Notes:
This 177-nucleotide RNA was probed chemically with DMS and 2A3. The RNA was probed in 150 mM KOAc, 10 mM MgCl2 and 150 mM bicine (pH 8.5) at 24 C. For DMS the reverse transcriptase was MarathonRT. The 2A3 profile rests on 1,824 reads.

[RMDB]
RNA sequence: GGGAACGACUCGAGUAGAGUCGAAAAUCGUCGUCUUCGACGCCGACGAUCAGGUCUGUCGCGUCCAACUGGGCGACCAGUCGAAGACACCCUGCCUCGAGUGCGACGAGCCGAUCGACGUCGGUUGCACCCUGGAUGGUUUCGACCAUCCAGGGUGAAAAGAAACAACAACAACAAC
Reactivity to DMS in 0.01 (KOAc 150mM, MgCl2 10mM, bicine 150mM(pH8.5), 24C), signal-to-noise 3, nucleotides 027 to 126: u020c060g040u000c010g010u000c050u000u000c020g010a050c030g020c100c030g010a060c000g000a100u000c070a150g000g010u000c020u010g020u010c040g010c100g060u000c120c120a160a070c050u000g000g010g000c160g000a140c060c060a040g020u000c020g010a080a070g010a040c050a050c150c010c030u000g020c070c000u000c130g000a080g010u010g000c030g030a040c060g000a110g000c020c010g000a010u010c050g000a080c080g000u000c000g020g000u010u000g000
Reactivity to 2A3 in 0.01 (KOAc 150mM, MgCl2 10mM, bicine 150mM(pH8.5), 24C), signal-to-noise 2, nucleotides 027 to 126: u080c000g110u000c020g010u000c060u150u060c040g040a020c010g060c010c000g010a010c000g010a060u030c080a060g050g070u040c040u120g040u000c020g000c020g040u010c050c020a190a170c120u080g000g000g000c030g030a070c030c010a020g010u020c020g050a080a040g020a010c000a030c030c020c020u040g050c050c000u090c080g090a060g070u090g050c000g010a030c020g040a020g030c000c010g090a130u130c060g110a050c070g010u000c000g030g000u060u100g070